[RMDB]
RNA sequence: GGGAACGACUCGAGUAGAGUCGAAAAGACGAUGUGUUGACCGGCUGCCGUUUGAGGACUUUGGUCACCCAGACUAGACACCUUCUGUGCUCAUGUUUGGAAAGCUGAAAGGGAAGGACAGCUGUGCCUAUUUAAAGUGGUUCGCCACUUUAAAUAGAAAAGAAACAACAACAACAAC
Reactivity to DMS in 0.01 (KOAc 150mM, MgCl2 10mM, bicine 150mM(pH8.5), 24C), signal-to-noise 9, nucleotides 027 to 126: g010a090c090g010a090u010g010u000g010u000u010g010a130c050c030g000g000c050u000g010c030c020g010u000u000u000g000a130g020g010a100c050u000u010u010g010g010u000c050a140c300c010c010a060g000a030c030u000a250g000a080c050a040c030c180u010u010c110u010g010u000g010c120u000c040a120u010g010u000u000u010g010g000a060a150a140g000c030u000g010a040a050a080g010g010g010a080a050g000g010a070c040a040g000c030u000g010u010g010c120
Reactivity to 2A3 in 0.01 (KOAc 150mM, MgCl2 10mM, bicine 150mM(pH8.5), 24C), signal-to-noise 9, nucleotides 027 to 126: g070a010c060g060a100u120g080u030g030u160u090g050a050c030c010g020g000c030u030g030c010c030g130u050u110u170g130a090g020g050a040c010u060u070u080g030g010u040c000a030c010c000c000a010g000a010c010u040a050g010a020c010a030c030c020u200u140c100u270g030u010g010c010u000c030a040u080g050u040u040u020g050g000a090a040a020g000c030u070g080a090a030a020g050g010g020a040a030g030g010a070c000a000g000c010u030g020u090g090c000

Source: RMDB library OK2TRN, as collected in RNAgym. An RNA of 177 nucleotides, treated with DMS and 2A3 and read out base by base. The 2A3 profile rests on 22,695 reads. The DMS profile rests on 34,157 reads.